[RMDB]
RNA sequence: GGGAACGACUCGAGUAGAGUCGAAAAGAUAUGGACUAUAAACGCUACUCAGCGUUGAAAUCGGAAACGAUGGAGCUGGUAGCGCUACUAUAGUCCUAAGUCAAAUCAUCAUGUUCGCAUGAUGAAAGAAGAGUUAAGGGUUCGCCCUUAACUCUUCAAAAGAAACAACAACAACAAC
Reactivity to 2A3 in 0.01 (KOAc 150mM, MgCl2 10mM, bicine 150mM(pH8.5), 24C), signal-to-noise 3, nucleotides 027 to 126: g040a020u080a050u120g000g000a010c010u020a010u030a040a090a010c010g030c000u010a010c080u110c300a000g000c010g170u280u030g000a020a000a000u020c000g020g030a080a030a030c010g030a000u010g010g010a010g020c000u010g020g020u000a010g010c000g000c000u020a020c010u000a000u000a000g010u030c010c000u000a130a000g050u000c040a000a050a160u040c000a000u000c000a000u000g030u070u090c300g000c140a000u020g000a010u000g050a080a060a050
Reactivity to DMS in 0.01 (KOAc 150mM, MgCl2 10mM, bicine 150mM(pH8.5), 24C), signal-to-noise 3, nucleotides 027 to 126: g020a060u000a300u000g000g000a010c000u000a010u000a020a070a130c010g000c000u000a010c000u020c010a000g040c000g000u010u010g000a050a120a040u000c010g010g010a100a090a200c000g000a010u000g000g020a150g020c000u000g010g010u000a010g020c000g020c020u020a050c180u000a000u000a000g010u010c000c000u010a020a070g010u000c030a060a110a190u010c010a000u000c010a000u000g000u000u020c170g020c000a000u000g000a010u000g000a010a070a120